[RMDB]
RNA sequence: GGGAACGACUCGAGUAGAGUCGAAAAUUGGUGGUUGUUUUUUAACCUAUAAAAGAUAAUGGAAUACAUUUUAUAGACUGGAUUUUAUCUGUUCCCUUGGCCUCUCCUGGCUGUACUCAGUUUAAUACAUAGAAUGAAUCUUCGGAUUCAUUCUAUGAAAAGAAACAACAACAACAAC
Reactivity to DMS in 0.01 (KOAc 150mM, MgCl2 10mM, bicine 150mM(pH8.5), 24C), signal-to-noise 1, nucleotides 027 to 126: u010u010g010g040u000g010g010u000u010g000u000u000u010u000u030u000a040a100c060c010u000a040u020a020a050a020a050g010a080u000a110a090u000g000g010a160a180u010a080c030a050u010u010u000u000a040u010a050g000a110c100u010g000g010a030u000u000u020u010a050u000c100u000g010u000u000c000c000c020u000u000g020g020c000c010u000c210u010c110c040u010g000g030c010u000g020u000a030c100u000c070a040g040u010u020u000a020a070u000a170